[RMDB]
RNA sequence: GGGAACGACUCGAGUAGAGUCGAAAAGGUUGGUUUGGUGAGAGCUGGAAACAUGUUGGUUUUCCCUUCCCAAGUAUAACAAGGCCUGUUUCCGCCUCCGCGGCCGCUGCUGCAGUGCCACGCGGUGAACUGUCCAGGACAUGACAAAAGGGCUCGGCAAUACGGGUAGAUUCGUCUACCCGUAUUGAAAAGAAACAACAACAACAAC
Reactivity to DMS in 0.01 (KOAc 150mM, MgCl2 10mM, bicine 150mM(pH8.5), 24C), signal-to-noise 2, nucleotides 027 to 156: g000g000u000u010g020g020u000u000u000g000g000u010g020a070g020a080g050c010u020g040g000a080a060a060c040a100u010g010u010u000g020g010u000u000u010u000c010c000c020u010u000c040c030c010a080a170g030u000a120u000a090a130c080a100a100g010g020c000c010u010g000u000u000u000c000c030g020c040c010u000c020c020g020c040g010g030c030c020g030c010u000g000c090u010g020c030a080g040u000g030c010c010a080c040g010c060g020g020u010g000a030a060c050u000g010u000c100c020a100g000g000a090c060a100u010g020a130c060a020a060a080a130g000g010g030c010u000c040g010g040
Reactivity to 2A3 in 0.01 (KOAc 150mM, MgCl2 10mM, bicine 150mM(pH8.5), 24C), signal-to-noise 2, nucleotides 027 to 156: g100g000u040u070g010g030u010u060u110g000g000u050g040a080g010a030g070c070u080g020g070a060a010a020c020a050u110g050u090u100g120g060u030u000u040u050c070c020c030u030u060c020c000c000a050a050g100u180a160u070a190a100c080a100a040g020g000c020c050u010g020u020u010u060c010c020g000c050c010u030c000c030g020c020g010g010c020c020g020c040u080g000c080u040g050c000a010g060u020g120c020c020a140c060g030c010g000g000u050g010a040a030c060u020g020u010c020c010a010g020g010a000c020a110u160g030a040c050a070a100a000a040g050g030g010c050u030c010g040g000

Background: Source: RMDB library OK3TST, as collected in RNAgym. Structure probing data (DMS and 2A3) for a 207-nucleotide construct.